Description
Conditions: 150 mM KOAc, 10 mM MgCl2 and 150 mM bicine (pH 8.5), 24 C. Chemical mapping of a 177-nucleotide RNA with DMS and 2A3. It was measured as part of the RMDB library OK1LIB. For DMS the reverse transcriptase was MarathonRT. The DMS profile rests on 5,211 reads. 2A3 adducts were read by reverse transcription with SuperScript II with manganese. Values cover nucleotides 27 to 126.

RNA sequence: GGGAACGACUCGAGUAGAGUCGAAAAGUCGGGAUUGUUUAUGGUGGUCGUUGAAGUCAUAACCAUAAGAUGAACGUUGGAUUGCGGAAAAUCUAUGAAAGUUUAUCAUAGGUAUUGGGCGACCGAGCUAUAAUUAUUUAUUCGUAAAUAAUUAUAGAAAAGAAACAACAACAACAAC
Reactivity to DMS in 0.01 (KOAc 150mM, MgCl2 10mM, bicine 150mM(pH8.5), 24C), signal-to-noise 3, nucleotides 027 to 126: g000u000c020g000g000g000a180u020u010g000u010u000u010a040u030g020g020u010g000g010u010c030g030u020u010g010a120a160g010u000c050a060u030a150a060c040c020a050u010a050a070g010a070u000g000a060a080c060g000u010u000g000g000a060u000u020g010c090g020g000a100a060a060a020u010c010u000a020u010g000a070a120a180g000u030u030u030a060u000c000a090u000a030g020g020u010a080u010u010g000g010g010c050g030a060c010c030g000a100g000
Reactivity to 2A3 in 0.01 (KOAc 150mM, MgCl2 10mM, bicine 150mM(pH8.5), 24C), signal-to-noise 1, nucleotides 027 to 126: g070u030c070g020g000g020a090u000u000g000u060u000u020a060u000g020g020u040g000g000u000c000g020u050u040g050a040a000g100u030c000a020u040a070a060c010c000a020u040a060a090g040a010u020g010a030a010c010g010u020u000g020g030a010u010u060g000c030g010g020a050a120a000a000u000c000u010a010u020g090a040a080a000g010u000u050u140a000u000c000a000u030a030g000g000u020a070u070u190g070g000g000c030g000a000c000c010g030a000g020